[RMDB]
RNA sequence: GGGAACGACUCGAGUAGAGUCGAAAACAUAGGACUCAGCUAUCCCCCCAACUCCCACAGGAACCUCAGGCCCAGAGUCCCCAGGAGGGAGCAGCCGGCAACACGGUUUCCGCUGUGGAGACGGGGCGUAGUAGUCCUCGUUCGCGAGGACUACUACAAAAGAAACAACAACAACAAC
Reactivity to DMS in 0.01 (KOAc 150mM, MgCl2 10mM, bicine 150mM(pH8.5), 24C), signal-to-noise 1, nucleotides 027 to 126: c090a140u000a120g000g000a080c070u010c050a060g000c130u000a080u010c150c050c000c000c000c020a160a200c060u000c020c000c000a040c040a110g040g000a000a020c000c000u000c300a050g000g000c010c050c010a210g010a150g000u010c000c030c000c050a170g010g000a190g040g000g050a070g040c060a110g030c220c230g030g000c000a010a120c130a050c170g030g010u000u000u000c040c010g000c130u020g000u000g000g010a000g020a080c250g010g000g020g020c300
Source: RMDB library OK2TST, as collected in RNAgym. An RNA of 177 nucleotides, treated with DMS and read out base by base. Values cover nucleotides 27 to 126.